RNA sequence: GGGAACGACUCGAGUAGAGUCGAAAACUUAGCCGGUUUUAACGCUGUUUUAUUGGCGCAAAGGUUUACGGAUAAACAACUAAUAAUUAAACCUUUUGUGUGCGAAACGUGGUUGUUUAACGUACUCACUGCCCCCAGGGAUUCGUCCCUGGGGGAACCUCACAGUAAUCUUCGGAUUACUGUGAGGAAAAGAAACAACAACAACAAC
Reactivity to 2A3 in 0.01 (KOAc 150mM, MgCl2 10mM, bicine 150mM(pH8.5), 24C), signal-to-noise 2, nucleotides 027 to 156: c050u120u120a030g030c000c010g040g030u040u000u020u120a040a030c030g020c000u030g170u090u200u030u140a120u110u270g020g000c020g000c020a030a040a030g000g010u000u010u030a020c020g000g040a100u120a200a150a030c030a040a000c050u120a070a110u090a210a060u210u100a030a010a010c010c010u000u070u230u140g050u050g000u030g000c030g010a100a000a020c060g060u060g020g000u010u010g040u070u040u060a040a010c000g010u030a030c030u030c050a020c010u050g020c000c020c000c000c000a000g040g010g000a000u040u080c070g030u010c030c010c000u000g020g000g000g010g010a000a010